[RMDB]
RNA sequence: GGGAACGACUCGAGUAGAGUCGAAAACAGAAGAGCAGUGGUAUAGUGCGAAGGUACACUGAGGGACUAGGCUGACGGUCAUAGUGCGACUGUAAACAAAGCAUGUUGUGCACCCCACACCUCCCUGCUGGACGUGGGUUCAAUUCCCACCAUCUCCGGUAAUUCAAUGGUUCGCCAUUGAAUUACCAAAAGAAACAACAACAACAAC
Reactivity to 2A3 in 0.01 (KOAc 150mM, MgCl2 10mM, bicine 150mM(pH8.5), 24C), signal-to-noise 4, nucleotides 027 to 156: c040a030g140a140a030g030a010g010c020a030g020u110g170g000u110a070u100a160g030u040g030c050g050a130a030g000g020u030a020c050a020c060u070g020a130g050g000g030a040c070u060a070g090g000c010u050g060a030c060g000g010u060c040a120u070a080g050u070g100c050g050a010c020u020g060u150a110a120a080c060a040a100a000g030c020a030u100g010u060u040g020u090g020c030a020c010c000c020c000a020c000a000c000c030u060c000c000c000u020g010c030u040g010g060a030c100g000u030g000g000g010u000u020c010a010a020u070u030c020c000c000a000c020c000a080u020c050u000c020c000
Reactivity to DMS in 0.01 (KOAc 150mM, MgCl2 10mM, bicine 150mM(pH8.5), 24C), signal-to-noise 2, nucleotides 027 to 156: c050a200g000a090a150g020a070g020c010a050g000u000g020g000u000a070u000a010g000u000g000c010g020a160a130g020g000u000a070c000a060c040u000g010a110g010g010g010a200c040u000a040g000g040c030u000g020a040c080g020g010u000c010a100u000a080g020u000g020c120g000a020c020u000g040u010a060a040a060c040a070a040a120g000c030a080u000g040u000u000g020u000g000c030a080c070c010c010c010a030c040a020c010c030u000c020c000c040u000g030c010u000g040g030a120c110g020u010g000g010g000u000u010c160a050a300u000u000c000c020c000a060c030c070a130u000c040u000c040c300